[RMDB]
RNA sequence: GGGAACGACUCGAGUAGAGUCGAAAAGCUGCCUCUGACGUCCUUAAGGGUGGUAAAGCGGGUCUCCCCCGGAAACUGGGCCGCGCCUGGCGCUAGCACGGGUAUGCGUGGUGGUCGACCCUGGCCGACUAUGGAUACGAUUCGUCGUAUCCAUAGUAAAAGAAACAACAACAACAAC
Reactivity to DMS in 0.01 (KOAc 150mM, MgCl2 10mM, bicine 150mM(pH8.5), 24C), signal-to-noise 9, nucleotides 027 to 126: g020c050u000g010c020c000u000c040u000g000a120c110g010u000c020c030u000u000a150a130g000g010g020u010g000g010u000a040a090a100g020c080g000g010g010u010c050u010c040c020c010c010c020g000g000a030a080a090c070u000g010g010g030c040c100g010c110g010c020c040u000g020g010c040g010c040u000a090g010c050a070c050g000g010g010u000a070u010g010c040g020u000g000g020u000g020g010u000c070g000a070c030c010c020u010g010g000c010c050g010
Reactivity to 2A3 in 0.01 (KOAc 150mM, MgCl2 10mM, bicine 150mM(pH8.5), 24C), signal-to-noise 7, nucleotides 027 to 126: g010c020u030g040c010c010u060c040u060g040a050c030g070u060c020c000u090u120a100a100g060g020g000u070g020g020u110a120a060a010g070c050g020g020g040u020c050u010c040c000c000c000c010g050g060a080a090a020c030u060g010g010g010c020c020g030c030g020c020c060u060g060g000c020g000c050u050a030g030c030a030c070g050g020g040u170a050u170g050c030g010u060g000g060u070g000g030u060c040g020a070c000c000c020u010g050g040c010c000g020
Chemical mapping of a 177-nucleotide RNA with DMS and 2A3. The data come from the RNA Mapping Database (RMDB), library OK2TRN. For DMS the reverse transcriptase was MarathonRT. The RNA was probed in 150 mM KOAc, 10 mM MgCl2 and 150 mM bicine (pH 8.5) at 24 C. The DMS profile rests on 23,308 reads.